[RMDB]
Structure probing data (DMS and 2A3) for a 177-nucleotide construct. It was measured as part of the RMDB library OK2TST. For DMS the reverse transcriptase was MarathonRT. 2A3 adducts were read by reverse transcription with SuperScript II with manganese.
RNA sequence: GGGAACGACUCGAGUAGAGUCGAAAACUCACCACGACAAAUAAUCCACGCAUGCAAGAGCGCGUGGUCGAUCUCCACGAUCUACGCCAUCGCCUUUUGCGCACGCUCUCUGAAGUAAAAGGUGGACGCAGUAAUACCAUUUCGAUGGUAUUACUGCAAAAGAAACAACAACAACAAC
Reactivity to DMS in 0.01 (KOAc 150mM, MgCl2 10mM, bicine 150mM(pH8.5), 24C), signal-to-noise 6, nucleotides 027 to 126: c070u000c050a190c070c050a060c060g030a050c120a080a110a100u020a060a130u000c010c030a030c010g020c100a100u010g020c040a060a020g000a020g020c170g010c020g030u000g000g020u000c090g000a020u000c010u010c170c200a100c200g000a030u000c010u000a080c300g000c010c030a050u000c040g030c020c050u000u020u000u000g000c000g000c150a070c100g010c010u000c030u020c080u000g000a090a080g010u000a060a040a080a080g010g010u000g000g000a070c260
Reactivity to 2A3 in 0.01 (KOAc 150mM, MgCl2 10mM, bicine 150mM(pH8.5), 24C), signal-to-noise 8, nucleotides 027 to 126: c010u020c030a070c040c020a050c040g170a060c100a060a140a060u220a110a060u100c020c010a010c030g070c050a030u180g000c010a030a010g010a010g040c110g010c000g000u010g000g010u000c020g010a010u000c050u110c130c050a090c150g000a010u000c020u050a030c080g000c020c010a080u160c060g010c020c000u030u060u050u070g000c010g010c010a020c060g030c000u020c000u010c040u150g160a190a010g030u090a030a080a060a060g140g010u010g000g010a010c050